[RMDB]
RNA sequence: GGGAACGACUCGAGUAGAGUCGAAAAGAUAUGGAUUCGUAACAAGCUGAUGACCAUACUGGUAGCUGUAUGGUCGGAAACGACCAUACCGAUAGUAUGCAAGGCUUGGAGAAGAAUCCUAAGUCAAAACUUAAGGUGACUUCGGUCACCUUAAGAAGAUACCUUGUACCUUCGGGUACAAGGUAUCAAAAGAAACAACAACAACAAC
Reactivity to 2A3 in 0.01 (KOAc 150mM, MgCl2 10mM, bicine 150mM(pH8.5), 24C), signal-to-noise 3, nucleotides 027 to 156: g000a000u010a000u020g000g000a000u000u000c000g010u020a020a040c000a000a010g000c010u030g000a300u020g010a090c010c000a010u000a000c000u030g100g140u250a050g070c010u010g000u000a000u000g000g000u010c000g000g000a000a000a000c000g000a000c000c000a010u000a000c000c000g000a000u010a000g000u000a000u010g000c030a110a270g000g000c000u000u010g020g000a010g040a020a040g000a000a000u000c000c000u000a000a000g000u000c010a020a010a140a210c000u000u010a000a000g000g000u000g010a000c000u060u110c300g030g000u010c000a000c040c010u000u000a000a000g000a000a000
Reactivity to DMS in 0.01 (KOAc 150mM, MgCl2 10mM, bicine 150mM(pH8.5), 24C), signal-to-noise 2, nucleotides 027 to 156: g010a040u000a070u010g000g010a020u000u000c000g000u000a200a300c010a040a020g030c010u010g020a040u010g030a050c300c000a020u010a020c000u000g000g030u010a110g040c070u000g030u000a000u000g020g020u000c000g000g010a040a020a040c010g000a020c010c000a000u010a000c000c030g030a120u010a060g010u000a020u000g020c030a070a040g050g050c000u000u000g000g020a110g030a170a300g000a070a010u000c000c000u000a000a110g000u000c010a110a070a100a200c000u000u000a010a010g020g020u010g030a050c000u010u000c290g050g040u000c010a000c010c000u000u030a000a000g010a060a130

About this RNA: An RNA of 207 nucleotides, treated with 2A3 and DMS and read out base by base. DMS (dimethyl sulfate) methylates the pairing face of unpaired adenines and cytosines. Values cover nucleotides 27 to 156. 2A3 adducts were read by reverse transcription with SuperScript II with manganese. The reactions ran in a buffer of 150 mM KOAc, 10 mM MgCl2 and 150 mM bicine (pH 8.5), at 24 C.